Structure probing data (2A3 and DMS) for a 170-nucleotide construct. For DMS the reverse transcriptase was MarathonRT. Reactivities are given for positions 27 through 129. 2A3 adducts were read by reverse transcription with SuperScript II with manganese.
RNA sequence: GGGAACGACUCGAGUAGAGUCGAAAAAUAGGCUUAUCAAGAGAGGUGGAGAGACUGGCCCGAUGAAACCCGGCAGCCAGAAAUGGUGCCCAUUCCUGCAGCGGAAACGUUGAAAGAUGAGCCGAUGUCACGGGUAUGUUCGCAUACCCGAAAAGAAACAACAACAACAAC
Reactivity to 2A3 in 0.01 (KOAc 150mM, MgCl2 10mM, bicine 150mM(pH8.5), 24C), signal-to-noise 8, nucleotides 027 to 129: a000u160a030g000g000c000u030u010a010u030c050a110a010g120a010g010a060g140g030u060g040g040a100g000a000g030a070c010u000g010g000c010c000c000g030a060u210g090a030a030a040c040c010c000g000g000c050a020g030c010c000a010g020a030a070a030u100g040g030u110g020c000c000c000a020u080u060c000c010u040g030c010a000g000c000g020g010a050a040a010c020g000u010u020g070a140a060a010g000a010u010g010a000g020c010c010g010a040u120g090u090c070a020
Reactivity to DMS in 0.01 (KOAc 150mM, MgCl2 10mM, bicine 150mM(pH8.5), 24C), signal-to-noise 7, nucleotides 027 to 129: a080u020a090g010g010c020u020u000a000u030c010a080a070g050a080g020a050g040g020u010g030g010a090g000a020g000a140c050u030g030g010c050c000c000g000a080u050g010a060a110a110c130c020c040g000g000c090a120g030c000c000a010g020a030a050a060u020g030g030u000g000c050c020c000a120u050u040c000c000u000g020c020a050g000c030g030g000a060a050a090c030g020u000u040g010a060a100a090g010a030u000g000a010g030c010c000g000a020u040g010u050c120a070